[RMDB]
RNA sequence: GGGAACGACUCGAGUAGAGUCGAAAACCGGGCGUGCGGUCCCGCUCCCCGUAAUGUACGGAGGUAGAAGAAAGGGCUCUGGCCCUCUCGGCGUUAUGUCUUCGGUGCUUGCGGCUUCCCGUUCGCGCACACACGUUUAGUUCGCUAAACGUGUGUGAAAAGAAACAACAACAACAAC
Reactivity to DMS in 0.01 (KOAc 150mM, MgCl2 10mM, bicine 150mM(pH8.5), 24C), signal-to-noise 2, nucleotides 027 to 126: c200c020g000g010g010c240g000u020g020c040g010g010u000c030c020c000g020c040u000c150c060c000c010g010u000a060a070u020g040u010a020c020g000g000a060g010g000u010a020g000a180a110g010a010a050a030g000g010g010c010u010c250u010g020g010c010c010c000u000c020u000c030g010g010c140g010u000u020a070u020g000u000c010u000u000c030g020g020u000g010c010u010u000g010c000g010g020c120u000u000c020c000c000g010u010u000c050g010c080g000
Reactivity to 2A3 in 0.01 (KOAc 150mM, MgCl2 10mM, bicine 150mM(pH8.5), 24C), signal-to-noise 2, nucleotides 027 to 126: c000c000g010g040g000c040g010u100g010c050g000g130u060c000c010c010g010c030u020c000c020c000c000g020u030a040a110u200g040u070a030c010g030g020a070g050g000u080a020g020a210a010g010a030a060a000g020g000g000c020u020c100u230g260g000c040c000c000u000c010u010c010g070g000c060g070u140u120a080u190g040u000c000u020u030c060g080g020u050g000c020u000u050g000c000g000g000c000u020u030c000c010c000g010u080u090c020g000c010g000